[RMDB]
RNA sequence: GGGAACGACUCGAGUAGAGUCGAAAACAUGCCGACGGCCAGAAUGUUUUGCGUAUCAGGGAUAACGGUGUUUGAUAGAAACGUGUCGGUCGCGCCGGACGUGUUCGACUGGAUGUACGACCCCUCGACGGGCGGCUGAUUAUAGACGAGCGGAUAGGCUGACCUAAUACUUCGGUAUUAGGUCAGCAAAAGAAACAACAACAACAAC
Reactivity to 2A3 in 0.01 (KOAc 150mM, MgCl2 10mM, bicine 150mM(pH8.5), 24C), signal-to-noise 1, nucleotides 027 to 156: c000a020u020g060c030c020g050a170c040g000g000c050c030a100g100a100a090u160g090u000u020u000u210g100c120g060u080a060u140c040a030g110g000g060a060u050a280a080c010g030g000u040g100u080u250u030g150a150u070a030g050a000a050a070c020g020u060g010u050c000g010g010u000c000g000c050g110c030c030g000g080a050c030g080u100g000u040u050c000g020a020c010u070g100g100a030u170g110u090a000c000g050a060c000c040c010c010u030c030g030a070c000g000g000g000c030g000g020c000u040g060a070u090u090a110u050a000g000a020c040g000a090g080c050g000g020a020u120a080g060